[RMDB]
RNA sequence: GGGAACGACUCGAGUAGAGUCGAAAAGCUGCGCGGCUGGGCGAUCCGACGCACAUCGCGCUGCUGCGCGAGGUCGCCAGCGCCGAGGGCGACGACCGCUACCCCGAUCGGCAGUGGGACGCGCAGUUCGCGCGGCGCGUGCUCGACCAGCUCGACACUAGACACGAGUUUUCGAACUCGUGUCUAGAAAAGAAACAACAACAACAAC
Reactivity to 2A3 in 0.01 (KOAc 150mM, MgCl2 10mM, bicine 150mM(pH8.5), 24C), signal-to-noise 2, nucleotides 027 to 156: g040c030u070g020c010g030c050g040g000c000u010g010g110g000c010g040a230u040c060c040g100a070c040g060c010a070c020a050u070c030g000c010g000c030u040g040c060u080g020c000g010c010g000a040g130g010u060c030g060c100c020a100g070c030g030c040c030g060a110g050g010g050c110g040a050c040g040a060c030c070g080c070u140a110c000c000c050c030g080a220u130c050g030g020c010a030g030u100g020g030g000a030c010g000c000g000c000a000g020u080u190c040g000c000g020c000g040g000c010g020c020g040u100g000c040u020c020g000a010c010c000a010g010c000u030c020g000a000c010a030